[RMDB]
RNA sequence: GGGAACGACUCGAGUAGAGUCGAAAAGCACGCAGCUCGUCGAGCGCGUGAAUCAGCGUUUCGGCGACGAACACGCCGCCAUAUGGGCCGAAAUGGCCGCGAUCAUCGGGAAGGUUAUACAUGACGACGUGCACGGUCGAUUCGUCGACCGUGCACGAAAAGAAACAACAACAACAAC
Reactivity to DMS in 0.01 (KOAc 150mM, MgCl2 10mM, bicine 150mM(pH8.5), 24C), signal-to-noise 1, nucleotides 027 to 126: g030c000a040c040g000c090a160g000c100u000c030g000u010c100g000a030g000c010g030c020g040u010g020a040a050u010c120a120g060c000g000u000u040u000c020g000g000c040g050a070c040g000a070a200c130a140c070g000c000c010g020c000c000a040u000a060u000g000g000g060c060c000g000a020a040a040u000g020g030c000c000g040c030g010a080u000c100a070u000c070g000g000g000a110a110g000g020u040u000a110u000a120c170a100u000g010a020c040g010a170

Annotation: Chemical mapping of a 177-nucleotide RNA with DMS. Values cover nucleotides 27 to 126. For DMS the reverse transcriptase was MarathonRT. The RNA was probed in 150 mM KOAc, 10 mM MgCl2 and 150 mM bicine (pH 8.5) at 24 C. Reactivities are rounded to 0.1 and cut off at 0 and 3.